[RMDB]
RNA sequence: GGGAACGACUCGAGUAGAGUCGAAAAGAUAUGGAGUUAUCUUCGCUAUGCGUUUGACGUACGACAUUUAUUCGGAAACGAAUAAAUGUCGUACCGAGCAUAGAACUACGAAUAUAACUCCUAAGUCGCCGUAUAAAUUGUUCGCAAUUUAUACGGCAAAAGAAACAACAACAACAAC
Reactivity to 2A3 in 0.01 (KOAc 150mM, MgCl2 10mM, bicine 150mM(pH8.5), 24C), signal-to-noise 1, nucleotides 027 to 126: g080a030u130a100u300g010g030a020g010u000u000a000u010c040u040u010c000g000c030u030a020u020g000c030g110u090u290u280g080a070c020g020u000a000c000g000a000c000a000u000u000u010a000u010u000c020g070g030a090a100a120c000g010a010a000u000a010a010a000u050g000u000c000g000u000a000c000c000g000a000g000c000a000u000a000g000a040a090c160u300a060c030g010a020a000u010a010u000a000a010c020u010c010c020u010a110a020g020u020c100
Reactivity to DMS in 0.01 (KOAc 150mM, MgCl2 10mM, bicine 150mM(pH8.5), 24C), signal-to-noise 2, nucleotides 027 to 126: g000a100u020a300u010g020g000a010g010u000u000a000u000c070u000u000c000g030c030u010a000u000g000c010g020u020u010u010g030a130c300g010u000a000c000g010a000c000a000u000u000u000a000u020u000c000g000g010a080a110a280c010g000a040a000u010a000a010a000u000g000u000c000g030u000a000c000c010g000a130g000c000a010u000a000g010a060a070c150u010a300c000g010a000a000u000a010u000a010a010c000u000c000c000u010a030a110g010u000c120
An RNA of 177 nucleotides, treated with 2A3 and DMS and read out base by base. The data come from the RNA Mapping Database (RMDB), library TTRINS. For DMS the reverse transcriptase was MarathonRT. Conditions: 150 mM KOAc, 10 mM MgCl2 and 150 mM bicine (pH 8.5), 24 C. The DMS profile rests on 1,964 reads.